[RMDB]
RNA sequence: GGGAACGACUCGAGUAGAGUCGAAAAGCGUACUACACAGCUUGGAUUUACCAGAGGGAGUUCCUUGUGUUUCAUAACACCCCUUUGUCCCAAAUAGGACAAAGAACUGUUAUGAAACACAAGGAACAUCGAUCUCUGGUUGUCAGCUGUGUAUCGCGUUUAGCAGAGAGUUCGCUCUCUGCUAAACAAAAGAAACAACAACAACAAC
Reactivity to 2A3 in 0.01 (KOAc 150mM, MgCl2 10mM, bicine 150mM(pH8.5), 24C), signal-to-noise 3, nucleotides 027 to 156: g010c000g020u070a080c050u000a000c040a000c000a000g010c030u130u170g160g010a060u270u260u160a020c020c000a000g000a010g000g030g020a030g000u000u000c000c000u000u010g000u000g000u010u000u000c010a000u010a010a010c010a040c020c060c000c000u000u000u000g010u000c010c000c020a160a300a130u300a090g010g000a000c000a000a000a000g030a060a030c050u030g000u000u000a020u000g000a000a010a000c000a000c000a000a000g000g000a000a000c000a000u000c000g050a030u000c000u000c000u000g000g000u000u000g000u000c000a000g000c000u010g000u000g000u000a000u050c010g000c020
Reactivity to DMS in 0.01 (KOAc 150mM, MgCl2 10mM, bicine 150mM(pH8.5), 24C), signal-to-noise 1, nucleotides 027 to 156: g010c040g050u010a070c100u000a020c000a000c010a020g000c000u000u020g030g020a040u010u010u000a020c000c000a020g020a020g020g010g000a130g010u000u000c000c000u020u000g020u000g000u000u000u000c010a030u000a010a040c000a040c050c180c110c020u000u000u000g010u010c010c000c010a090a280a300u010a090g040g000a060c000a010a000a030g000a070a060c060u000g020u000u000a000u000g000a030a000a010c000a000c000a000a020g000g030a000a000c000a020u010c070g030a120u000c010u000c010u020g000g010u000u000g000u000c010a070g000c000u000g010u010g000u000a010u000c070g030c060
Conditions: 150 mM KOAc, 10 mM MgCl2 and 150 mM bicine (pH 8.5), 24 C. An RNA of 207 nucleotides, treated with 2A3 and DMS and read out base by base. For 2A3 the reverse transcriptase was SuperScript II with manganese. For DMS the reverse transcriptase was MarathonRT. Values cover nucleotides 27 to 156. The 2A3 profile rests on 4,054 reads.